[RMDB]
RNA sequence: GGGAACGACUCGAGUAGAGUCGAAAAAGUUCUGCUCGCUGUGAUAACGACCUUUGCAACGGACUAACUUCUCGGCUGCUGCACGAAUAGGUUCAAUAUCGUCGAUAUGCGCUUUGAGCUUAUCAGCGCGGAACCGCUCGUUAUCAAAGCUGGUACGAUCAUAACCCGCGUUCGCGCGGGUUAUGAUAAAAGAAACAACAACAACAAC
Reactivity to 2A3 in 0.01 (KOAc 150mM, MgCl2 10mM, bicine 150mM(pH8.5), 24C), signal-to-noise 1, nucleotides 027 to 156: a000g060u030u020c030u030g030c030u000c070g000c020u040g000u030g080a030u000a070a000c000g020a020c030c050u160u280u300g000c050a180a050c080g010g070a030c060u090a030a030c030u190u140c130u020c020g100g000c010u140g020c030u010g020c070a020c130g130a190a050u090a200g040g010u040u000c020a050a070u020a010u300c000g090u040c050g080a170u100a030u300g020c010g000c000u040u040u030g000a000g000c000u000u010a010u060c020a000g000c000g000c010g090g000a010a030c000c000g000c030u010c000g000u000u000a010u020c010a000a070a100g050c030u020g010g000u050a050c120g020